[RMDB]
RNA sequence: GGGAACGACUCGAGUAGAGUCGAAAAGAGGAGACAGCGGAUGACAGAUCGAAUUCACGUGCAGCCUGCACAUUUACGUCAGGCCGCUGCCCAUCACCAGCAGACCGCCGACUACCUGCGGACCGUGGUAGCCACCCUCCUUCGGGAGGGUGGCUACAAAAGAAACAACAACAACAAC
Reactivity to 2A3 in 0.01 (KOAc 150mM, MgCl2 10mM, bicine 150mM(pH8.5), 24C), signal-to-noise 1, nucleotides 027 to 126: g160a080g010g020a130g030a070c030a000g000c020g010g000a000u000g000a000c040a050g130a300u070c080g160a000a110u290u120c000a030c230g000u000g000c010a060g300c130c170u060g040c080a000c050a070u060u060u220a000c010g020u000c000a040g000g140c000c000g030c000u000g000c000c000c000a080u020c010a000c010c000a000g000c040a040g070a090c000c000g010c000c000g100a000c000u040a000c040c040u050g000c020g000g000a000c000c050g020u160g020